This 177-nucleotide RNA was probed chemically with 2A3 and DMS.
The RNA was probed in 150 mM KOAc, 10 mM MgCl2 and 150 mM bicine (pH 8.5) at 24 C.
As a SHAPE reagent, 2A3 marks flexible, mostly unpaired nucleotides at the ribose 2'-OH.

[RMDB]
RNA sequence: GGGAACGACUCGAGUAGAGUCGAAAAGGUCCAUGUGGCAAGCUUACAGGCUCCCAGUGUAAUGGGGCUUCUGUCCCUCACCUCACGUCACAUUCUAGCAACGUGAAGCCUUCUUACCAAGGCUUCCCUAGGGGACUACGUUCGCGUAGUCCCCUAGAAAAGAAACAACAACAACAAC
Reactivity to 2A3 in 0.01 (KOAc 150mM, MgCl2 10mM, bicine 150mM(pH8.5), 24C), signal-to-noise 1, nucleotides 027 to 126: g020g030u080c020c020a040u150g030u000g020g000c050a060a070g000c050u080u220a090c080a090g100g000c010u130c020c030c030a010g020u010g070u120a160a180u120g080g000g000g000c000u230u000c020u140g060u070c000c000c000u020c010a060c000c020u000c010a030c060g000u020c020a020c000a050u070u040c060u100a080g060c040a030a050c040g110u150g080a000a000g000c010c000u000u050c000u070u070a090c040c000a000a010g000g050c020u000u000c010c000
Reactivity to DMS in 0.01 (KOAc 150mM, MgCl2 10mM, bicine 150mM(pH8.5), 24C), signal-to-noise 2, nucleotides 027 to 126: g000g000u010c040c010a070u010g000u010g000g000c040a080a070g010c070u000u020a100c210a110g000g020c070u010c050c020c010a070g020u000g000u020a060a070u000g000g010g000g010c010u010u000c130u020g010u000c020c010c000u000c070a100c070c030u000c040a090c070g000u000c040a070c070a100u010u000c040u000a100g000c130a060a100c100g000u020g000a010a030g000c000c000u000u000c040u000u040a170c300c180a040a030g020g020c010u010u000c000c050

Background: The 2A3 profile rests on 1,095 reads. The data come from the RNA Mapping Database (RMDB), library OK2TST.